[RMDB]
RNA sequence: GGGAACGACUCGAGUAGAGUCGAAAAGCUGAUCGAUGCGGAAAGCGAGGGCGGCGGCGUGCUUCUGGAAGGCAUAGUCUCCGCUUAUGACGAGCGUUACAAACUGGCCGAGAUCGACCUUGGCGGAGUAUCCGGUGGAUUUCGAUCCACCGGAUACAAAAGAAACAACAACAACAAC
Reactivity to DMS in 0.01 (KOAc 150mM, MgCl2 10mM, bicine 150mM(pH8.5), 24C), signal-to-noise 1, nucleotides 027 to 126: g020c010u010g000a040u010c020g010a100u000g030c080g000g000a100a060a070g000c000g000a140g000g000g020c020g000g030c100g020g000c030g000u000g000c020u000u000c030u020g030g000a130a090g010g020c000a010u000a040g020u010c000u000c030c020g020c010u000u010a050u010g000a160c140g010a110g000c110g010u000u000a070c140a120a100a100c090u010g000g000c010c010g000a110g000a100u010c030g010a040c090c000u000u000g000g000c010g010g010a100
Reactivity to 2A3 in 0.01 (KOAc 150mM, MgCl2 10mM, bicine 150mM(pH8.5), 24C), signal-to-noise 1, nucleotides 027 to 126: g000c010u000g030a100u010c030g000a050u080g110c040g040g090a210a020a000g040c030g030a090g030g060g040c050g000g040c010g000g000c020g000u010g010c010u070u040c050u110g210g080a180a070g020g020c020a000u000a110g000u030c020u030c010c000g000c020u000u040a110u090g050a030c040g020a020g100c020g020u090u060a050c060a040a100a010c040u040g160g000c020c000g040a050g000a040u010c030g010a060c010c040u030u030g030g000c050g050g000a100
Structure probing data (DMS and 2A3) for a 177-nucleotide construct. High 2A3 reactivity points to a flexible backbone, as in loops and unpaired stretches. It was measured as part of the RMDB library OK2TRN. Conditions: 150 mM KOAc, 10 mM MgCl2 and 150 mM bicine (pH 8.5), 24 C. 2A3 adducts were read by reverse transcription with SuperScript II with manganese.